Chemical mapping of a 207-nucleotide RNA with 2A3 and DMS. The RNA was probed in 150 mM KOAc, 10 mM MgCl2 and 150 mM bicine (pH 8.5) at 24 C. It was measured as part of the RMDB library ARCHII. Values cover nucleotides 27 to 156. For 2A3 the reverse transcriptase was SuperScript II with manganese.
[RMDB]
RNA sequence: GGGAACGACUCGAGUAGAGUCGAAAAUCUUUCGCUAUCGCUGCCUAAAAACCAGUGAUGCGUAGCUUAAUCUUGGUUGCUGGCGUCUGAGGUUAGGCCAUAAAAGGCCAGAUCGUACUGCUUCUUACAUCUGGAAAAGCAGUAUUAAAUCAAUCAGCCUUUAUGACGUGUUCGCACGUCAUAAAGGAAAAGAAACAACAACAACAAC
Reactivity to 2A3 in 0.01 (KOAc 150mM, MgCl2 10mM, bicine 150mM(pH8.5), 24C), signal-to-noise 2, nucleotides 027 to 156: u040c010u030u160u110c010g000c020u110a000u030c020g000c010u000g000c000c010u060a050a060a020a030a040c020c000a020g000u020g040a000u000g020c000g040u020a030g000c020u040u040a080a010u000c020u020u020g020g000u080u250g020c010u020g000g020c010g090u060c010u040g010a010g020g000u020u010a020g000g000c070c030a080u230a150a170a010a020g050g010c000c020a010g040a030u060c020g010u000a010c000u000g020c000u050u000c020u090u190a090c050a240u150c140u140g100g000a050a130a060a000g000c000a000g000u000a030u000u040a010a010a010u090c060a040a040u070c010a070g060
Reactivity to DMS in 0.01 (KOAc 150mM, MgCl2 10mM, bicine 150mM(pH8.5), 24C), signal-to-noise 1, nucleotides 027 to 156: u010c060u000u000u000c070g020c040u010a000u010c040g030c040u020g050c020c000u000a090a040a110a170a070c300c010a040g010u000g020a030u000g030c030g000u010a090g040c100u000u000a030a040u000c060u010u000g020g070u000u000g040c050u000g050g040c010g040u000c010u000g010a020g010g020u000u040a040g010g010c000c040a110u040a050a050a140a130g010g010c040c010a040g010a060u000c150g070u000a010c040u000g020c020u000u000c010u000u040a230c060a160u000c130u010g030g000a030a050a030a020g040c030a000g010u000a000u000u010a040a010a070u000c140a080a040u000c070a140g000